[RMDB]
Overview:
Conditions: 150 mM KOAc, 10 mM MgCl2 and 150 mM bicine (pH 8.5), 24 C. An RNA of 177 nucleotides, treated with 2A3 and DMS and read out base by base. For 2A3 the reverse transcriptase was SuperScript II with manganese.
RNA sequence: GGGAACGACUCGAGUAGAGUCGAAAAGCUACACUCUUCGGAGUGUAGCAAACCCGAUGAAGCCGCACUUACGGAGCUUCAUACAUCUAAGAGUGCAAAUAAAAAUCGGCGACUUCGGUCGCCGAAAGUAUUGAUUAAUGUUCGCAUUAAUCAAUACAAAAGAAACAACAACAACAAC
Reactivity to 2A3 in 0.01 (KOAc 150mM, MgCl2 10mM, bicine 150mM(pH8.5), 24C), signal-to-noise 6, nucleotides 027 to 126: g000c000u000a000c000a000c010u020c000u020u040c170g140g000a000g000u000g000u000a000g000c000a000a000a000c000c000c000g010a080u060g020a020a010g050c060c030g040c080a020c040u080u130a050c170g100g050a050g010c010u050u040c030a020u070a060c060a070u060c050u150a120a060g060a020g080u040g020c020a020a140a060u160a080a120a020a030a030u030c000g000g020c010g000a010c000u040u050c240g100g010u000c010g000c000c000g000a000a000a000
Reactivity to DMS in 0.01 (KOAc 150mM, MgCl2 10mM, bicine 150mM(pH8.5), 24C), signal-to-noise 4, nucleotides 027 to 126: g000c000u000a000c000a000c000u010c000u000u010c200g040g010a030g010u000g000u000a000g000c000a000a050a070c000c010c000g010a070u000g000a040a040g010c050c220g000c050a060c060u000u000a300c230g010g020a170g000c050u000u000c070a050u000a100c150a070u000c140u000a080a170g000a050g030u000g010c040a110a060a090u010a030a090a090a130a060u000c000g000g020c010g000a010c000u000u020c150g030g000u000c000g030c010c000g000a000a000a040